[RMDB]
RNA sequence: GGGAACGACUCGAGUAGAGUCGAAAAGGGGUCCUAUUUCGAGCACUUUAUACAAACUGCCUUCAUUCUUGGAUUUACAGGCUGAAGCCUCCACGGCCUGUUGUCAGAAUGAGGCAGUUUGUAUAAAGUGCUAAGACAGAAUAGGACGGAGGCACCCGUUACUACGAAUGUUCGCAUUCGUAGUAACAAAAGAAACAACAACAACAAC
Reactivity to DMS in 0.01 (KOAc 150mM, MgCl2 10mM, bicine 150mM(pH8.5), 24C), signal-to-noise 1, nucleotides 027 to 156: g020g000g050g020u000c010c000u000a000u000u010u010c030g000a050g020c000a020c010u010u010u010a020u000a010c010a030a020a010c000u000g010c000c010u000u010c020a030u000u000c040u010u020g050g010a060u000u000u000a040c000a000g000g020c020u030g020a030a090g010c020c020u000c010c020a300c020g020g000c000c020u000g040u000u000g000u020c030a060g000a020a030u000g010a040g000g010c000a000g000u010u000u000g020u010a000u000a010a000a010g000u000g010c010u000a000a050g000a120c300a040g000a060a030u000a040g000g000a040c000g040g040a070g040g030c010a150c000c000c050